Structure probing data (2A3 and DMS) for a 207-nucleotide construct. Reactivities are given for positions 27 through 156. Conditions: 150 mM KOAc, 10 mM MgCl2 and 150 mM bicine (pH 8.5), 24 C. For DMS, 1,467 sequencing reads were counted. The 2A3 profile rests on 740 reads. 2A3 adducts were read by reverse transcription with SuperScript II with manganese.
RNA sequence: GGGAACGACUCGAGUAGAGUCGAAAACACAAUGAGAUACCACUUCACACCUGCUAGGAUGGGUAGAAUAAAAAAGAUAAUAGGUAUCGGAGGUGGAACAAUUGGGGCCCUUAUAUACUGCUCAUGGGAGUAUAAAUGGUACAGUCACUUUGGAAAAUCGAUUACCUUUUUUCGAAAAGGUAAUCGAAAAAGAAACAACAACAACAAC
Reactivity to 2A3 in 0.01 (KOAc 150mM, MgCl2 10mM, bicine 150mM(pH8.5), 24C), signal-to-noise 2, nucleotides 027 to 156: c030a000c010a000a100u180g020a050g010a080u010a020c000c000a030c030u020u060c040a060c000a000c060c000u120g020c040u100a070g080g180a120u050g010g010g060u040a000g050a110a040u170a150a110a020a000a020a000g050a020u130a150a070u090a110g000g010u020a010u030c030g020g030a060g000g020u030g000g080a090a000c090a040a110u080u040g000g000g030g090c000c000c000u010u060a010u000a000u020a030c030u050g110c010u020c070a080u140g090g000g020a020g060u040a020u040a120a170a010u090g000g020u050a020c020a000g030u060c040a010c040u060u000u090g060g030a000a050a020a070
Reactivity to DMS in 0.01 (KOAc 150mM, MgCl2 10mM, bicine 150mM(pH8.5), 24C), signal-to-noise 1, nucleotides 027 to 156: c030a070c060a130a140u000g020a240g000a210u020a110c040c010a100c070u000u000c050a220c070a070c030c040u010g020c090u010a160g040g010a050u000g020g040g000u000a100g020a050a040u050a000a010a040a060a140a090g010a120u000a050a110u010a070g080g040u010a060u010c020g020g000a050g020g020u000g020g030a070a030c010a030a110u000u000g010g050g090g040c060c010c100u010u020a060u000a100u000a020c040u000g030c060u000c090a170u000g030g000g000a040g040u010a020u000a010a000a050u000g000g020u000a050c030a080g000u000c040a000c080u000u020u000g040g000a100a080a050a110